[RMDB]
RNA sequence: GGGAACGACUCGAGUAGAGUCGAAAAACACGUGCUCCAAAAGAGCACAGAGUCGUGCAAAUGACUGGCUCGACAGAUGCACGACAAAUCGAGCCAUGAAAAGAACAAAGGAAAACAACAAACGAAACGAGAUGUUGGUCUUCGGACCAGCAUCUCGAAAAGAAACAACAACAACAAC
Reactivity to DMS in 0.01 (KOAc 150mM, MgCl2 10mM, bicine 150mM(pH8.5), 24C), signal-to-noise 3, nucleotides 027 to 126: a110c110a090c260g030u000g030c040u000c000c000a050a120a140a240g000a000g000c010a000c020a120g000a210g000u010c000g070u020g000c050a000a080a150u060g000a060c090u010g000g030c040u010c020g010a020c160a090g000a150u010g010c070a040c020g000a000c000a060a040a090u010c030g000a050g000c000c040a080u070g000a040a010a090a070g010a090a080c110a030a180a060g020g040a080a020a060a030c240a060a080c080a070a090a180c070g010a060a080a140
Reactivity to 2A3 in 0.01 (KOAc 150mM, MgCl2 10mM, bicine 150mM(pH8.5), 24C), signal-to-noise 6, nucleotides 027 to 126: a000c070a010c100g000u000g000c000u000c000c010a040a030a030a040g030a000g000c020a010c010a010g000a030g010u010c000g000u000g020c010a040a060a160u210g060a100c070u030g020g010c010u020c070g010a020c010a030g120a080u060g000c030a020c030g040a010c080a000a060a010u090c010g020a000g000c000c040a050u120g110a030a050a050a040g080a060a000c100a070a080a070g170g050a070a110a020a020c130a050a000c030a060a110a010c100g110a100a050a030